This 177-nucleotide RNA was probed chemically with 2A3 and DMS. The DMS profile rests on 1,246 reads.
RNA sequence: GGGAACGACUCGAGUAGAGUCGAAAAGAAAUACUUUCUACAUGUAAAGAAGGGAUGUGGAAUGAGUAUCAAUCUCAUUACUAUGGACAUGGAGGUGAAGGACCCUACCAUGUCAUACAAAAUUGAAGCUUAGUAAAUCCUUCGGGAUUUACUAAGCAAAAGAAACAACAACAACAAC
Reactivity to 2A3 in 0.01 (KOAc 150mM, MgCl2 10mM, bicine 150mM(pH8.5), 24C), signal-to-noise 3, nucleotides 027 to 126: g040a000a120a000u010a020c030u030u020u060c020u050a030c000a040u160g100u300a100a170a170g110a110a050g150g010g040a020u020g020u010g060g010a030a000u180g040a030g000u010a020u140c040a040a080u000c000u020c000a030u100u110a120c110u100a090u140g070g030a000c010a000u000g000g000a010g050g000u040g120a190a190g220g140a160c000c000c000u030a100c010c000a000u000g010u000c000a000u040a000c000a010a120a070a070u190u110g050a090a000
Reactivity to DMS in 0.01 (KOAc 150mM, MgCl2 10mM, bicine 150mM(pH8.5), 24C), signal-to-noise 2, nucleotides 027 to 126: g010a120a130a080u000a060c040u000u000u000c020u000a030c050a060u000g000u000a080a120a130g010a110a040g000g000g020a030u000g030u000g000g010a040a040u020g000a030g030u000a140u000c090a040a120u020c000u020c030a070u010u020a130c210u010a010u000g020g020a000c000a000u000g000g000a020g010g030u000g020a080a160g000g020a160c160c000c010u000a140c010c000a000u010g010u000c000a000u000a060c160a040a030a070a080u010u010g010a100a170